This 207-nucleotide RNA was probed chemically with 2A3.
[RMDB]
RNA sequence: GGGAACGACUCGAGUAGAGUCGAAAAUUGAGCAUGUCAGCUUCCUCUUUCCGUCUCACAUCAGAGACAAAUAUAUUUCCCUCUCUGUUCAACUCUAUCUGCUCCCUCACCUGCUUGACGAAAACCAGAGGGUCCUUCUCUUUUGCGUAAGCACCGAGCCGUGAUCAUAUUUCGAUAUGAUCACGGCAAAAGAAACAACAACAACAAC
Reactivity to 2A3 in 0.01 (KOAc 150mM, MgCl2 10mM, bicine 150mM(pH8.5), 24C), signal-to-noise 1, nucleotides 027 to 156: u090u040g020a060g000c110a020u080g060u110c040a020g020c060u090u060c000c000u140c060u100u080u060c070c020g030u000c000u050c030a180c040a300u160c090a090g040a030g050a080c060a010a150a000u210a000u020a030u000u110u080c000c040c000u010c000u000c000u040g110u000u100c040a120a100c030u010c010u160a100u090c040u090g000c020u040c000c000c000u000c000a060c000c020u030g020c000u070u030g050a000c050g080a070a110a010a010c000c070a010g000a000g060g010g020u010c000c020u030u060c000u060c060u040u080u000u130g000c000g010u030a000a050g010c000a080c060c000g080a000
Source: RMDB library OK3TST, as collected in RNAgym.